[RMDB]
RNA sequence: GGGAACGACUCGAGUAGAGUCGAAAAUGAUAUAAUCUGCAUCCGACAACGAUCACCAACUUCCACCUUGAUCGAUUGGUCGCAUAAUCCAUUAAAUUUGGAAGUAGUCGCUCAUGCUUAACAUUACCAUGAGUAGGGUAUUCGUACCCUACUCAUGAAAAGAAACAACAACAACAAC
Reactivity to DMS in 0.01 (KOAc 150mM, MgCl2 10mM, bicine 150mM(pH8.5), 24C), signal-to-noise 5, nucleotides 027 to 126: u020g020a090u040a070u020a090a060u010c030u000g010c050a050u010c080c020g000a060c030a080a110c120g010a080u010c120a060c130c070a070a060c040u000u000c020c050a060c300c100u020u000g000a020u000c170g010a070u010u010g010g020u000c110g010c130a120u040a090a050u000c010c020a010u000u000a030a060a110u020u020u020g000g010a020a060g000u010a070g010u010c030g000c040u030c100a010u030g020c070u000u000a040a100c080a060u020u030a070c120
Reactivity to 2A3 in 0.01 (KOAc 150mM, MgCl2 10mM, bicine 150mM(pH8.5), 24C), signal-to-noise 9, nucleotides 027 to 126: u100g040a010u040a020u040a210a130u050c040u060g000c000a030u030c050c020g030a020c010a110a040c040g030a020u060c020a020c080c020a060a040c030u050u030c020c010a050c030c030u040u060g030a030u030c020g080a090u010u080g080g030u090c010g020c020a030u090a110a040u010c010c010a000u050u110a120a100a100u090u060u040g010g000a010a010g020u040a020g030u040c020g010c020u020c040a040u080g000c020u040u090a090a030c020a140u080u120a070c070